Structure probing data (2A3 and DMS) for a 207-nucleotide construct.
Conditions: 150 mM KOAc, 10 mM MgCl2 and 150 mM bicine (pH 8.5), 24 C.
2A3 adducts were read by reverse transcription with SuperScript II with manganese.
As a SHAPE reagent, 2A3 marks flexible, mostly unpaired nucleotides at the ribose 2'-OH.
For DMS the reverse transcriptase was MarathonRT.
RNA sequence: GGGAACGACUCGAGUAGAGUCGAAAAUUGUGUAUACAUUUGAAUACUCUGCUCAAAUGCAUUAAACCAUAUCCCGCUUUUAAUAAUCUCACACAAGUAAUCAAUGAAAUUGAUGACUUGAUGGCAAAAUGGGAUGAUACAUAUGAUGCUGAGAAACGAGAGACUCUGUAUUCGUACAGAGUCUCUCAAAAGAAACAACAACAACAAC
Reactivity to 2A3 in 0.01 (KOAc 150mM, MgCl2 10mM, bicine 150mM(pH8.5), 24C), signal-to-noise 2, nucleotides 027 to 156: u080u000g030u010g020u060a020u020a140c010a000u060u000u000g050a050a020u100a130c020u010c000u100g040c000u000c010a080a000a000u060g000c020a020u000u130a120a090a040c020c010a040u030a060u090c000c010c000g060c060u070u150u100u040a100a080u100a070a070u060c010u000c040a020c000a000c000a090a010g000u030a030a020u000c010a010a050u200g150a290a170a140u170u020g000a000u000g030a010c010u030u020g000a060u020g170g000c060a090a020a020a150u080g000g030g020a000u030g020a020u050a100c040a020u150a110u190g050a030u090g040c080u080g080a040g090a220a050a030c120
Reactivity to DMS in 0.01 (KOAc 150mM, MgCl2 10mM, bicine 150mM(pH8.5), 24C), signal-to-noise 1, nucleotides 027 to 156: u010u000g070u000g060u010a120u000a030c030a070u000u000u000g000a100a200u000a150c060u000c150u000g040c000u000c040a010a010a020u000g010c000a070u000u030a000a130a090c030c040a070u000a180u020c010c020c000g070c230u000u000u000u000a060a140u000a150a030u010c040u010c040a090c000a130c000a000a030g000u000a010a000u000c000a000a030u030g050a030a020a300u000u000g000a070u010g000a000c010u010u000g000a090u000g000g000c120a100a040a040a100u000g010g000g010a030u000g000a280u000a100c070a060u010a110u010g000a090u000g030c060u000g030a070g000a180a130a090c220